[RMDB]
An RNA of 177 nucleotides, treated with DMS and 2A3 and read out base by base. DMS (dimethyl sulfate) methylates the pairing face of unpaired adenines and cytosines. For 2A3 the reverse transcriptase was SuperScript II with manganese. The DMS profile rests on 2,422 reads.
RNA sequence: GGGAACGACUCGAGUAGAGUCGAAAAGCGGAUCAUCGUAUCAAUUGCUUGAUAAGCGGGCAGUUCUUUGUCGUAAUGAAGCGCAUCGAGGAGUGACUUGAGACCAUUAAGAAAGAAGCCCACCUCCUGCGAUUAGUAGAUUCGUCUACUAAUCGCAAAAAGAAACAACAACAACAAC
Reactivity to DMS in 0.01 (KOAc 150mM, MgCl2 10mM, bicine 150mM(pH8.5), 24C), signal-to-noise 3, nucleotides 027 to 126: g020c020g010g030a060u000c030a070u000c130g030u010a050u010c040a040a070u000u010g010c030u010u000g010a140u000a080a110g020c070g010g000g010c040a080g020u000u000c040u010u010u010g040u000c070g010u000a080a080u010g020a090a100g000c100g000c060a090u000c040g000a040g030g020a130g010u000g000a090c050u010u010g010a050g010a100c090c010a060u000u000a050a070g000a080a060a060g010a060a160g020c000c010c020a160c050c060u000c050c070
Reactivity to 2A3 in 0.01 (KOAc 150mM, MgCl2 10mM, bicine 150mM(pH8.5), 24C), signal-to-noise 2, nucleotides 027 to 126: g040c030g010g030a030u020c000a000u060c100g010u140a020u030c050a090a130u090u060g020c000u030u050g040a070u140a240a020g080c050g000g000g000c010a050g040u040u020c050u050u100u120g110u110c040g020u040a060a080u070g050a050a090g010c050g000c080a060u050c060g020a020g000g050a100g090u070g090a100c020u030u020g020a020g030a050c020c010a030u110u040a090a020g060a050a080a010g050a050a010g010c000c010c020a020c010c020u020c010c030